[RMDB]
Conditions: 150 mM KOAc, 10 mM MgCl2 and 150 mM bicine (pH 8.5), 24 C. This 177-nucleotide RNA was probed chemically with DMS and 2A3. It was measured as part of the RMDB library M2PK50.
RNA sequence: GGGAACGACUCGAGUAGAGUCGAAAAGCCCAUAUGUUCGCAUAUGGGCAAAAGCUGAUCUGAGCAUGCGAGCUCUCUGCGACAAAAGUCAACGCAAUAAAAAAACACGUCACUUCGGUGACGUGAACUUACUGCAAAACUUCGGUUUUGCAGUAAGAAAAGAAACAACAACAACAAC
Reactivity to DMS in 0.01 (KOAc 150mM, MgCl2 10mM, bicine 150mM(pH8.5), 24C), signal-to-noise 2, nucleotides 027 to 126: g010c000c000c000a010u000a000u010g000u000u000c130g050c050a020u000a010u000g000g010g030c010a010a010a050a060g010c040u020g010a080u010c090u020g020a090g010c030a090u000g010c120g020a130g000c050u000c040u000c050u000g040c040g000a060c110a050a080a100a150g000u020c090a030a090c110g030c030a060a100u050a000a000a070a100a030a100a160c000a000c000g010u000c000a010c000u000u000c140g010g010u010g020a020c010g000u010g000a020a120
Reactivity to 2A3 in 0.01 (KOAc 150mM, MgCl2 10mM, bicine 150mM(pH8.5), 24C), signal-to-noise 3, nucleotides 027 to 126: g000c010c000c020a000u000a010u010g010u020u040c190g000c100a000u020a000u020g000g000g000c020a030a030a040a000g000c020u020g050a110u100c020u060g020a000g030c020a030u110g060c070g090a040g020c000u010c000u030c020u050g000c010g050a050c050a050a220a020a000g080u110c040a070a090c050g010c070a060a080u200a240a140a010a000a000a000a000c000a000c000g010u000c000a010c010u010u070c180g060g000u000g000a000c000g000u000g000a000a010